[RMDB]
RNA sequence: GGGAACGACUCGAGUAGAGUCGAAAAUGUGCAUAGUUCUGGUCAGCUUGGGAAAGGCAAGGACCACAGUGGAAAAGGAAAUGGAAAGCAACCGGAAAAGAGUAAGAGAAAGGCCUCCAGUUGAUUUCCAGAGAUGCAGAUACUGUCCACACAGCCAGAUAGUGAGGGUGUUCGCACCCUCACUAUCAAAAGAAACAACAACAACAAC
Reactivity to 2A3 in 0.01 (KOAc 150mM, MgCl2 10mM, bicine 150mM(pH8.5), 24C), signal-to-noise 1, nucleotides 027 to 156: u120g040u010g010c020a020u040a040g090u110u030c040u080g030g000u010c010a010g010c060u040u090g020g010g000a050a050a050g030g000c050a030a050g090g000a020c000c020a030c060a050g080u090g060g000a070a080a030a080g010g010a020a100a060u020g000g020a000a010a010g000c000a000a030c000c010g000g040a060a180a030a000g030a020g040u080a210a020g070a000g020a150a060a040g040g070c000c030u000c020c000a020g010u000u020g000a070u090u000u000c000c010a010g020a020g010a100u130g000c010a000g000a030u090a110c040u040g010u020c000c010a030c020a010c010a030g060c000c010a000
Notes:
Chemical mapping of a 207-nucleotide RNA with 2A3. The 2A3 profile rests on 806 reads.